Chemical mapping of a 207-nucleotide RNA with 2A3 and DMS. 2A3 adducts were read by reverse transcription with SuperScript II with manganese. Source: RMDB library M2RFPK, as collected in RNAgym.

[RMDB]
RNA sequence: GGGAACGACUCGAGUAGAGUCGAAAAAGUCACCUACUACGAUAGGUGACAUUUGAACCAGCGAACAAUUCAGUUGCGAGAUUCGAGGUUUCAGUCUGAAUCAUAGUAGCCAUUACGAUGGCUACAACUCACUCCCGACUGUUCGCAGUCGGGAGAAGAAUAUGUCAUAGUUCGCUAUGACAUAUUCAAAAGAAACAACAACAACAAC
Reactivity to 2A3 in 0.01 (KOAc 150mM, MgCl2 10mM, bicine 150mM(pH8.5), 24C), signal-to-noise 9, nucleotides 027 to 156: a000g000u000c000a000c010c000u010a010c010u070a080c090g260a300u010a010g000g000u000g000a000c000a000u020u030u100g030a030a020c010c000a020g150c010g010a000a000c010a070a140u020u000c000a000g000u000u000g000c000g000a000g000a000u000u000c010g010a020g030g040u120u200u300c030a030g130u070c010u000g000a010a010u040c040a050u080a090g000u000a000g000c010c000a010u030u060a070c220g130a030u020g000g000c000u000a000c000a000a010c010u090c040a060c010u000c000c000c000g000a000c000u010g040u090u090c220g000c130a000g000u000c000g000g000g000a000g000a000a000
Reactivity to DMS in 0.01 (KOAc 150mM, MgCl2 10mM, bicine 150mM(pH8.5), 24C), signal-to-noise 3, nucleotides 027 to 156: a110g010u000c000a000c000c000u010a040c020u020a150c190g030a250u000a000g010g030u000g020a000c020a010u000u010u000g020a130a200c000c020a140g000c030g000a080a060c060a160a100u000u000c040a080g010u000u000g000c000g020a090g020a070u010u000c020g010a240g010g000u000u000u000c060a070g020u000c050u000g000a050a040u000c150a020u020a130g010u000a010g010c010c000a040u010u000a110c200g030a090u000g010g010c000u000a000c010a030a030c100u000c050a140c000u000c000c000c000g010a040c000u000g000u010u010c260g000c020a010g010u010c010g010g000g010a000g000a000a010
For DMS, 8,509 sequencing reads were counted. Values cover nucleotides 27 to 156. The RNA was probed in 150 mM KOAc, 10 mM MgCl2 and 150 mM bicine (pH 8.5) at 24 C.